[RMDB]
RNA sequence: GGGAACGACUCGAGUAGAGUCGAAAAUACACCUUCGGGUGUAGUAUCGCGUACUACUUAGACAUGCUGCCGAGUCUACGAUAAGUCCCAAAUAGGACUUUUGACGUAGACGAAGUCAGCAACAGCUAAGUAUCGCUCAAAGGUCUUUCGAGACCAAUCCAACCAGUUGAUUCGUCAACUGGUUGGAAAAAGAAACAACAACAACAAC
Reactivity to DMS in 0.01 (KOAc 150mM, MgCl2 10mM, bicine 150mM(pH8.5), 24C), signal-to-noise 2, nucleotides 027 to 156: u000a010c030a000c000c010u000u010c300g090g040g030u000g030u010a000g010u010a130u000c020g020c010g040u000a120c160u000a000c000u010u000a020g000a080c070a300u000g000c010u030g020c000c030g010a300g010u000c000u000a030c010g010a200u000a030a030g010u000c000c010c030a040a180a200u010a020g010g000a020c000u000u000u000u030g010a220c050g030u000a020g010a020c000g010a110a010g000u000c020a040g060c000a000a020c060a240g010c000u000a000a000g010u000a030u000c030g000c010u000c040a030a070a090g030g000u000c020u000u000u010c190g020a080g000a010c010c000a060a230
Reactivity to 2A3 in 0.01 (KOAc 150mM, MgCl2 10mM, bicine 150mM(pH8.5), 24C), signal-to-noise 3, nucleotides 027 to 156: u010a000c000a000c010c000u050u090c290g140g020g030u060g000u010a040g020u090a090u170c110g000c000g000u070a100c030u010a040c000u020u070a020g020a060c030a060u060g020c000u000g000c000c000g000a020g030u000c010u000a000c000g080a060u020a080a000g010u040c020c040c000a170a190a050u200a090g000g010a000c000u020u020u010u150g210a110c040g000u000a000g030a010c000g000a030a000g030u040c010a000g020c000a020a000c020a030g040c010u000a000a000g000u000a020u300c000g000c010u010c050a160a110a000g000g000u000c000u010u100u190c280g070a020g020a000c000c000a000a050